RNA sequence: GGGAACGACUCGAGUAGAGUCGAAAAUUCUGUUAUAAUGGCAGGCCGUUCGUGUUUGCACUGGCUGACACAUUUUCUUCAUCUUUCUCUUUGCAAAGGCCUAGAUCGUGCCUCACACCAGUGGAUGUAAUUGUAGAACUUUCGAGUUCUACAAUUAAAAAGAAACAACAACAACAAC
Reactivity to 2A3 in 0.01 (KOAc 150mM, MgCl2 10mM, bicine 150mM(pH8.5), 24C), signal-to-noise 6, nucleotides 027 to 126: u050u000c010u020g060u070u080a160u060a300a120u120g040g000c020a010g020g020c010c020g030u080u130c070g000u070g010u080u080u100g040c050a040c070u050g090g000c020u010g060a010c010a000c010a060u070u070u070u040c020u090u040c020a110u010c050u000u100u020c050u010c000u070u140u090g040c080a120a050a050g020g000c010c010u030a050g030a130u110c050g040u100g020c010c010u030c010a050c000a020c010c020a040g020u040g060g020a040u090g030
Reactivity to DMS in 0.01 (KOAc 150mM, MgCl2 10mM, bicine 150mM(pH8.5), 24C), signal-to-noise 9, nucleotides 027 to 126: u010u000c020u000g010u000u000a080u010a140a110u010g000g010c020a040g000g020c060c030g000u010u010c120g020u000g010u000u000u000g010c030a070c060u010g010g010c220u000g000a060c090a050c050a080u000u010u010u000c030u010u000c070a060u000c020u000u000u000c020u000c140u000u000u010g010c120a040a070a070g010g010c050c070u000a070g000a060u000c110g010u000g010c020c050u000c080a060c120a080c030c030a040g010u000g010g010a110u000g010
Chemical mapping of a 177-nucleotide RNA with 2A3 and DMS. Reactivities are given for positions 27 through 126. The reactions ran in a buffer of 150 mM KOAc, 10 mM MgCl2 and 150 mM bicine (pH 8.5), at 24 C. It was measured as part of the RMDB library OK2TRN. DMS (dimethyl sulfate) methylates the pairing face of unpaired adenines and cytosines. 2A3 adducts were read by reverse transcription with SuperScript II with manganese.